[RMDB]
RNA sequence: GGGAACGACUCGAGUAGAGUCGAAAACAAGAGCCUCUGUGCUUAUGCCAGGAGGAGGGCCUUGCCCGACUGAGAGUGCUCGCUGAAAGAGGCUGCGACGCGGGUUAUUCAGUUCGAUGCGCCCAGGCGAUCGUCCUAUCUUCGGAUAGGACGAUCGAAAAGAAACAACAACAACAAC
Reactivity to 2A3 in 0.01 (KOAc 150mM, MgCl2 10mM, bicine 150mM(pH8.5), 24C), signal-to-noise 4, nucleotides 027 to 126: c020a010a050g040a000g090c010c010u030c010u050g110u130g100c030u260u180a140u300g040c020c010a030g040g030a050g070g040a070g030g040g040c030c050u050u080g010c040c000c000g030a030c030u030g030a030g010a000g130u060g010c010u000c020g000c040u040g080a070a090a040g110a020g020g080c030u110g000c050g060a050c030g000c020g040g030g000u040u060a040u040u030c030a000g010u030u120c030g040a040u110g040c000g000c030c010c010a020g040g040
Reactivity to DMS in 0.01 (KOAc 150mM, MgCl2 10mM, bicine 150mM(pH8.5), 24C), signal-to-noise 2, nucleotides 027 to 126: c020a040a160g000a100g020c000c010u030c020u000g000u020g000c000u000u030a110u050g030c010c000a070g010g030a090g010g000a160g060g000g030c020c040u040u000g010c030c040c010g000a100c040u020g000a090g000a070g010u020g010c010u000c060g010c030u000g000a050a050a060g010a090g010g020c020u000g010c020g000a160c100g030c060g020g000g030u000u000a140u000u000c050a080g020u050u030c080g000a020u020g000c030g000c000c030c010a030g020g000
Source information: This 177-nucleotide RNA was probed chemically with 2A3 and DMS. The RNA was probed in 150 mM KOAc, 10 mM MgCl2 and 150 mM bicine (pH 8.5) at 24 C. 2A3 adducts were read by reverse transcription with SuperScript II with manganese.